Structure probing data (DMS and 2A3) for a 177-nucleotide construct. DMS adducts were read by reverse transcription with MarathonRT. Source: RMDB library RFM100, as collected in RNAgym. The DMS profile rests on 834 reads. Conditions: 150 mM KOAc, 10 mM MgCl2 and 150 mM bicine (pH 8.5), 24 C. For 2A3, 573 sequencing reads were counted.

RNA sequence: GGGAACGACUCGAGUAGAGUCGAAAAAGCUCACCCAAAGUCAACGGAGCGCCAGCUACGUGUUAUGGGCAGCGAAAGUACCAGAGCCAAAGAGUUCCUCUGAUCGCCUGGCCGGAGCACAUUUGUGGGUUCACUCCAUCUUCGGAUGGAGUGAACCAAAAGAAACAACAACAACAAC
Reactivity to DMS in 0.01 (KOAc 150mM, MgCl2 10mM, bicine 150mM(pH8.5), 24C), signal-to-noise 1, nucleotides 027 to 126: a100g000c000u000c170a040c060c000c010a120a060a040g000u020c020a120a030c000g150g010a000g030c150g000c100c170a110g000c000u000a050c120g000u000g120u000u150a170u000g000g000g000c300a020g060c000g000a000a160a040g000u020a060c120c020a000g010a050g040c120c140a000a000a000g030a040g000u070u000c070c000u000c030u000g000a170u060c070g000c050c030u000g000g120c000c050g000g000a070g140c150a000c000a240u060u020u000g000u090g000
Reactivity to 2A3 in 0.01 (KOAc 150mM, MgCl2 10mM, bicine 150mM(pH8.5), 24C), signal-to-noise 1, nucleotides 027 to 126: a000g000c000u000c020a050c020c000c000a100a030a000g070u020c160a070a030c020g060g000a090g000c020g040c040c030a040g000c030u160a010c090g030u040g000u100u000a030u010g000g000g050c000a010g030c030g070a280a000a000g000u000a040c000c040a020g020a030g030c070c070a000a300a000g110a110g050u050u040c000c000u000c010u000g060a030u000c060g040c000c020u000g010g000c000c000g000g000a050g080c060a040c020a070u110u090u090g080u020g000